[RMDB]
RNA sequence: GGGAACGACUCGAGUAGAGUCGAAAAAGGUUUACACCAUUUUUUUGCAAGACUGCAUCCAUAUCGUGCGUCAGCUCGGCAUCGUAGUAGCCACACAGCGAGGUGUCUCGCACGUCGAAAAGGUAAGGCCAUGUAAGCCUUUCGAGGCUUACAUGGCAAAAGAAACAACAACAACAAC
Reactivity to DMS in 0.01 (KOAc 150mM, MgCl2 10mM, bicine 150mM(pH8.5), 24C), signal-to-noise 1, nucleotides 027 to 126: a030g000g000u010u020u000a110c220a120c040c000a000u000u000u000u000u000u000u000g020c030a070a120g030a050c110u000g000c040a050u000c020c010a100u000a050u000c000g040u000g020c010g000u000c060a010g010c030u000c030g030g010c100a060u000c080g000u000a080g000u000a140g020c060c100a120c130a040c080a130g010c020g000a040g000g030u000g000u010c040u000c060g000c030a000c050g000u000c030g000a030a020a040a060g000g010u010a100a100g010
Reactivity to 2A3 in 0.01 (KOAc 150mM, MgCl2 10mM, bicine 150mM(pH8.5), 24C), signal-to-noise 1, nucleotides 027 to 126: a000g000g000u090u060u100a020c050a020c020c030a130u070u000u000u000u000u000u190g020c060a070a110g050a220c120u030g050c000a020u030c010c000a070u100a050u170c060g080u070g000c020g070u020c020a030g020c020u010c020g040g000c040a050u040c070g030u020a090g000u040a010g070c020c000a090c000a000c000a030g020c030g030a020g070g030u090g080u050c040u020c010g000c010a040c010g060u040c070g000a080a090a000a000g000g020u080a020a080g070
This 177-nucleotide RNA was probed chemically with DMS and 2A3. The 2A3 profile rests on 1,039 reads. Values are in units of 0.01, from 0 to 300, in steps of 10. The data come from the RNA Mapping Database (RMDB), library OK2TST. For 2A3 the reverse transcriptase was SuperScript II with manganese. As a SHAPE reagent, 2A3 marks flexible, mostly unpaired nucleotides at the ribose 2'-OH.